The record gives the reactivity of an RNA of 177 nucleotides to 2A3.
RNA sequence: GGGAACGACUCGAGUAGAGUCGAAAAUCUUUUCACAAACAUUGCCUUGACAAUUACCUAAGAACCAUGACAACUGCCCCAUAUGUGGCCAGCUUGUCAACUAAAUCUCAAGGUAACAAGAUGAUGAACCCGAUGGUCGGUUCGCCGACCAUCGGGUAAAAGAAACAACAACAACAAC
Reactivity to 2A3 in 0.01 (KOAc 150mM, MgCl2 10mM, bicine 150mM(pH8.5), 24C), signal-to-noise 2, nucleotides 027 to 126: u000c000u170u110u060u040c170a100c050a090a060a020c000a020u020u020g000c000c000u000u010g000a020c090a120a260u020u020a000c000c000u020a000a070g030a080a030c040c120a290u050g000a000c000a020a000c040u000g000c000c000c000c000a170u150a170u300g280u260g040g010c050c000a000g000c060u000u000g000u000c000a000a000c000u100a000a020a080u060c110u000c020a020a020g000g010u000a000a000c030a000a040g070a000u040g020a000u000g070a020
The reactions ran in a buffer of 150 mM KOAc, 10 mM MgCl2 and 150 mM bicine (pH 8.5), at 24 C. Source: RMDB library OK1LIB, as collected in RNAgym.